[RMDB]
RNA sequence: GGGAACGACUCGAGUAGAGUCGAAAAACCUCUAAGUUCGCUUAGAGGUAAUCAACGCUGCAAAAAGCAGCGCGCUCAGCGGAGCACGCAAAAGCAACGCAAGAACACCAUUCUUCGGAAUGGUGAACAACUAAUAGGGCUUCGGCCCUAUUAGUUGAAAAGAAACAACAACAACAAC
Reactivity to 2A3 in 0.01 (KOAc 150mM, MgCl2 10mM, bicine 150mM(pH8.5), 24C), signal-to-noise 2, nucleotides 027 to 126: a000c010c010u020c010u010a020a010g010u020u100c130g020c150u000u010a000g010a010g010g000u010a010a030u080c010a010a060c050g000c000u000g000c010a160a140a150a010a200g010c000a010g010c000g000c030g010c000u050c040a030g040c030g080g020a010g040c040a020c070g150c040a060a080a020a070g000c010a020a020c020g000c040a080a050g040a130a020c010a000c010c000a010u020u010c010u020u060c180g080g020a000a010u000g020g000u000g000a030a010
Reactivity to DMS in 0.01 (KOAc 150mM, MgCl2 10mM, bicine 150mM(pH8.5), 24C), signal-to-noise 2, nucleotides 027 to 126: a020c010c010u000c000u010a000a010g010u010u000c190g040c000u000u000a000g000a010g000g010u010a010a060u010c090a140a080c030g000c010u000g020c000a060a040a050a140a120g020c020a060g010c000g000c060g010c020u000c050a170g010c060g040g010a220g000c030a060c060g000c120a060a060a100a090g000c010a040a100c040g010c060a110a100g020a070a140c000a000c000c000a000u000u000c010u000u030c210g020g000a020a010u000g000g000u000g000a060a060